[RMDB]
RNA sequence: GGGAACGACUCGAGUAGAGUCGAAAAGAUAUGGAAUCGAUACUCCAUCGAUCUAUAUGAAAGACAAUAGUAUAUCGGAAACGAUAUACUAUUGGGGAGUAUAGGGAGGAGAAUCGAUUCCUAAGUCCUAUUACCAUACGUUCGCGUAUGGUAAUAGAAAAGAAACAACAACAACAAC
Reactivity to 2A3 in 0.01 (KOAc 150mM, MgCl2 10mM, bicine 150mM(pH8.5), 24C), signal-to-noise 5, nucleotides 027 to 126: g010a020u050a020u110g010g000a000a010u000c000g000a000u060a150c000u020c000c000a300u300c050g000a020u040c020u010a020u000a000u100g240a240a170a080g300a070c010a010a000u000a010g000u010a010u000a000u000c000g020g010a020a010a020c000g010a010u000a010u000a010c000u010a000u000u000g010g000g070g070a170g030u010a020u020a020g020g000g000a030g000g010a000g020a020a040u000c010g000a000u010u000c000c000u000a010a000g000u000c010
Reactivity to DMS in 0.01 (KOAc 150mM, MgCl2 10mM, bicine 150mM(pH8.5), 24C), signal-to-noise 6, nucleotides 027 to 126: g010a050u000a100u010g000g000a000a010u000c000g020a020u000a100c000u000c000c000a300u010c240g010a040u010c000u000a010u000a010u000g000a200a180a240g010a140c000a000a000u010a010g010u000a000u010a000u000c000g010g000a070a070a110c000g000a010u000a000u000a010c000u010a000u010u000g000g020g020g020a300g010u000a000u000a010g000g000g000a020g040g010a030g000a130a030u000c000g010a020u000u000c000c000u000a010a070g000u000c010